[RMDB]
An RNA of 177 nucleotides, treated with DMS and 2A3 and read out base by base. The RNA was probed in 150 mM KOAc, 10 mM MgCl2 and 150 mM bicine (pH 8.5) at 24 C. The data come from the RNA Mapping Database (RMDB), library TTRDEL. For DMS, 1,078 sequencing reads were counted.
RNA sequence: GGGAACGACUCGAGUAGAGUCGAAAAGAUAUGGAGAAGAGCUUUGAUCAUGUUGUCUCGGAAACGAGACCAUGGGAGCUCCUCCUAAGUCAAAAGCGAUAGUUGUACUUCGGUACAACUAUCGCAAGGGUUAUACCUAGUUCGCUAGGUAUAACCCAAAAGAAACAACAACAACAAC
Reactivity to DMS in 0.01 (KOAc 150mM, MgCl2 10mM, bicine 150mM(pH8.5), 24C), signal-to-noise 1, nucleotides 027 to 126: g010a020u010a300u010g000g010a000g010a080a130g020a010g030c010u000u000u000g010a160u010c010a000u010g020u000u020g020u000c000u000c000g010g020a080a090a250c030g020a010g050a000c000c010a000u010g000g000g010a000g020c000u010c000c000u000c000c000u000a030a100g010u010c060a040a120a100a160g000c000g000a000u000a010g000u000u000g000u000a000c000u010u040c130g000g000u000a010c000a020a000c010u000a000u000c000g010c000a000a020
Reactivity to 2A3 in 0.01 (KOAc 150mM, MgCl2 10mM, bicine 150mM(pH8.5), 24C), signal-to-noise 2, nucleotides 027 to 126: g020a030u110a050u150g050g020a020g020a300a180g000a020g000c010u280u250u160g150a110u300c010a000u000g130u270u130g000u170c000u010c000g000g030a050a070a050c010g000a000g000a020c010c010a000u000g000g020g010a000g020c010u000c000c000u000c000c000u000a150a050g070u040c030a000a020a160a100g010c000g000a000u000a000g000u000u000g000u030a000c010u000u100c300g020g000u010a020c010a000a000c000u000a010u010c000g010c010a000a000